About this RNA
Structure probing data (2A3 and DMS) for a 170-nucleotide construct. For 2A3 the reverse transcriptase was SuperScript II with manganese. It was measured as part of the RMDB library 15KLIB. Reactivities are given for positions 27 through 129.

RNA sequence: GGGAACGACUCGAGUAGAGUCGAAAAUUCUCUUGCAAGGCCAUUCUCUAGCUAAGAAUAUCCUGCAUGUCGUAGGCCCAGAUGCCCGCGCUAAACAGGAUGUUUCUCUCCUUAGUAAGUGCUAUAAAAACUGAAUACUUCGGUAUUCAGAAAAGAAACAACAACAACAAC
Reactivity to 2A3 in 0.01 (KOAc 150mM, MgCl2 10mM, bicine 150mM(pH8.5), 24C), signal-to-noise 8, nucleotides 027 to 129: u020u000c010u000c000u010u080g090c050a060a060g060g000c010c030a060u110u030c070u020c010u070a030g030c020u110a070a010g010a010a000u020a000u020c000c000u000g010c030a030u070g070u080c010g000u000a000g000g000c010c030c030a070g020a090u250g010c000c000c000g010c000g000c020u060a080a080a020c000a000g000g010a010u010g030u010u090u010c050u000c010u040c010c010u020u000a020g030u020a100a050g030u060g090c050u050a070u150a140a110a010a020a020
Reactivity to DMS in 0.01 (KOAc 150mM, MgCl2 10mM, bicine 150mM(pH8.5), 24C), signal-to-noise 6, nucleotides 027 to 129: u060u020c030u020c040u060u030g030c070a130a120g030g050c070c050a130u000u000c050u030c000u020a130g020c060u060a130a070g000a000a000u000a030u040c010c040u030g000c070a300u000g000u040c000g040u000a070g020g070c010c030c130a110g000a120u050g050c000c000c000g070c020g030c000u040a040a160a170c000a080g010g020a030u020g020u000u000u000c060u030c010u020c090c000u030u020a080g000u030a030a070g030u070g050c060u050a060u090a080a060a050a110a120